[RMDB]
RNA sequence: GGGAACGACUCGAGUAGAGUCGAAAAGUAAAACCGAAAUCCCACUUUAUGACCGAAUUAAUCUAAACUCAGAGAGAUAAGGUAAUGACACAGAGGUUGUACUCACUUUGACGAUGAUUAACCAUCACCCUUAAAGGUAGUUCGCUACCUUUAAGGGAAAAGAAACAACAACAACAAC
Reactivity to 2A3 in 0.01 (KOAc 150mM, MgCl2 10mM, bicine 150mM(pH8.5), 24C), signal-to-noise 4, nucleotides 027 to 126: g050u040a000a050a020a100c070c030g040a070a010a090u040c010c050c010a020c030u120u150u070a160u180g060a000c000c050g050a040a020u030u010a040a000u030c040u060a050a020a110c070u080c120a010g020a000g010a000g010a050u040a090a020g050g000u020a040a060u100g040a000c010a000c040a130g060a050g110g010u040u060g040u060a050c030u060c060a030c060u070u040u130g050a050c060g000a020u050g040a060u090u120a040a010c030c000a020u060c010a030
Reactivity to DMS in 0.01 (KOAc 150mM, MgCl2 10mM, bicine 150mM(pH8.5), 24C), signal-to-noise 4, nucleotides 027 to 126: g020u010a070a090a030a170c130c060g010a040a080a130u000c010c000c010a140c190u000u000u020a020u020g000a030c050c030g000a180a040u000u010a060a170u000c030u000a070a120a090c190u000c170a070g000a090g000a190g000a050u000a030a140g000g000u000a040a050u000g010a050c090a070c150a110g010a120g000g020u000u000g030u000a010c050u000c110a070c050u000u020u010g010a060c130g020a080u000g000a040u010u000a080a080c140c040a110u000c060a240
Structure probing data (2A3 and DMS) for a 177-nucleotide construct.